Structure probing data (DMS and 2A3) for a 177-nucleotide construct. It was measured as part of the RMDB library OK1LIB. 2A3 adducts were read by reverse transcription with SuperScript II with manganese. Reactivities are given for positions 27 through 126. The DMS profile rests on 7,561 reads. Conditions: 150 mM KOAc, 10 mM MgCl2 and 150 mM bicine (pH 8.5), 24 C.
RNA sequence: GGGAACGACUCGAGUAGAGUCGAAAACGAAAUACAGUGAGUGGACGGAAGAAAUCCCCUUCCCACCUCCCCACUGUCCACUCACUGUCUUCCUAAUAGGAAAUAUAAAUCGGGGGUGGGAAGGGGAAUAUACUCGAUACUUCGGUAUCGAGUAUAUAAAAGAAACAACAACAACAAC
Reactivity to DMS in 0.01 (KOAc 150mM, MgCl2 10mM, bicine 150mM(pH8.5), 24C), signal-to-noise 4, nucleotides 027 to 126: c120g020a090a060a130u010a030c030a010g010u000g010a040g040u020g010g000a020c010g010g010a180a110g010a070a080a100u000c010c010c000c000u000u000c010c000c000a000c010c010u010c020c000c100c080a050c140u000g010u020c000c000a010c000u020c000a010c000u000g010u070c140u020u000c000c020u010a070a140u040a130g000g010a050a030a110u040a070u010a040a080a180u040c140g000g000g010g000g010u000g000g010g010a000a010g010g020g000g000a030
Reactivity to 2A3 in 0.01 (KOAc 150mM, MgCl2 10mM, bicine 150mM(pH8.5), 24C), signal-to-noise 7, nucleotides 027 to 126: c080g040a050a030a010u300a030c000a000g000u000g000a000g000u000g010g000a000c030g010g060a040a010g050a060a170a060u090c000c000c010c000u000u000c000c000c000a000c000c000u040c060c070c050c050a060c050u020g000u000c000c000a000c000u000c010a010c000u000g010u000c000u020u020c000c010u100a160a100u130a150g110g090a030a070a000u270a030u050a040a140a050u200c100g000g000g000g000g000u010g000g000g000a000a000g000g000g000g000a000